An RNA of 177 nucleotides, treated with DMS and 2A3 and read out base by base.
RNA sequence: GGGAACGACUCGAGUAGAGUCGAAAAGUGUGUGGUUCGCCACACACAAAAAGUGGUCACCCGCACCACAUGCGGAAAAACGACUGCUGGAACGGGGAAUCCUAAAAGUUACAGCUUCGGCUGUAACCCAUUGGUAGCAGUUCGCUGCUACCAAUGGAAAAGAAACAACAACAACAAC
Reactivity to DMS in 0.01 (KOAc 150mM, MgCl2 10mM, bicine 150mM(pH8.5), 24C), signal-to-noise 2, nucleotides 027 to 126: g010u000g020u000g040u000g000g000u000u010c200g000c010c000a000c000a000c000a010c020a010a020a080a070a040g010u010g010g000u000c050a190c150c010c020g000c050a120c060c190a140c140a300u000g020c020g000g000a050a080a060a080a190c140g010a010c010u000g000c030u000g000g010a130a100c120g020g000g000g020a220a240u000c030c010u010a040a090a080a110g000u000u000a000c000a000g000c010u000u010c180g000g040c000u000g010u000a000a010c000
Reactivity to 2A3 in 0.01 (KOAc 150mM, MgCl2 10mM, bicine 150mM(pH8.5), 24C), signal-to-noise 1, nucleotides 027 to 126: g010u010g000u000g020u010g000g050u050u120c200g040c050c000a000c000a000c000a010c000a010a020a000a010a010g040u030g000g000u000c030a020c010c000c010g000c020a040c060c060a070c020a040u090g000c030g000g120a110a180a020a030a080c080g020a040c000u000g000c020u010g000g030a050a050c030g000g000g000g060a020a040u040c000c020u090a140a100a020a060g010u000u000a000c000a000g010c000u050u090c150g120g010c000u000g010u010a000a000c000

For 2A3 the reverse transcriptase was SuperScript II with manganese. For DMS, 1,204 sequencing reads were counted. Reactivities are given for positions 27 through 126. DMS adducts were read by reverse transcription with MarathonRT.